Chemical mapping of a 207-nucleotide RNA with DMS and 2A3.
Reactivities are rounded to 0.1 and cut off at 0 and 3.
The 2A3 profile rests on 1,110 reads.
Conditions: 150 mM KOAc, 10 mM MgCl2 and 150 mM bicine (pH 8.5), 24 C.
It was measured as part of the RMDB library M2RFPK.
RNA sequence: GGGAACGACUCGAGUAGAGUCGAAAAACCGGCGGUAAAUCAACUCAGUUGAAAGCCGCGAGCGAUUUGGGUGCGAACUCAAAGGACAGCAGAUCCGGUGUAAUUCCGGGGCCGACGGUUAGAGUCCAAAAGAGGUUAUCGUUCGCGAUAACCUCAACAUAUUAUCGGACUUCGGUCCGAUAAUAUGAAAAGAAACAACAACAACAAC
Reactivity to DMS in 0.01 (KOAc 150mM, MgCl2 10mM, bicine 150mM(pH8.5), 24C), signal-to-noise 1, nucleotides 027 to 156: a070c110c000g060g020c020g010g030u010a070a080a180u000c060a020a130c020u000c060a170g010u000u000g000a110a160a300g000c030c020g040c030g000a050g020c010g010a210u000u000u010g000g000g020u000g050c300g000a140a030c010u000c010a010a030a070g020g000a130c000a170g000c010a070g010a120u000c010c000g010g070u010g010u010a240a300u000u000c000c030g050g010g020g000c040c010g000a060c020g010g000u000u000a060g020a150g010u000c030c020a030a080a090a100g010a020g010g010u010u000a020u000c000g030u000u020c300g040c030g030a010u000a000a010c010c000u000c000a000a060
Reactivity to 2A3 in 0.01 (KOAc 150mM, MgCl2 10mM, bicine 150mM(pH8.5), 24C), signal-to-noise 1, nucleotides 027 to 156: a010c030c000g020g000c030g000g020u080a120a110a170u020c030a010a040c050u120c300a190g010u010u000g030a050a100a050g040c050c060g040c030g010a070g020c000g030a040u000u010u030g000g000g010u030g040c030g040a070a020c010u000c000a020a000a000g020g050a040c040a010g000c010a000g010a080u040c020c000g000g000u010g020u040a020a040u070u010c010c000g000g000g000g000c010c020g000a010c000g020g010u030u050a070g040a060g100u070c020c030a010a040a000a160g010a000g010g000u010u010a010u010c020g000u020u070c220g030c010g100a000u000a000a000c010c000u000c000a000a000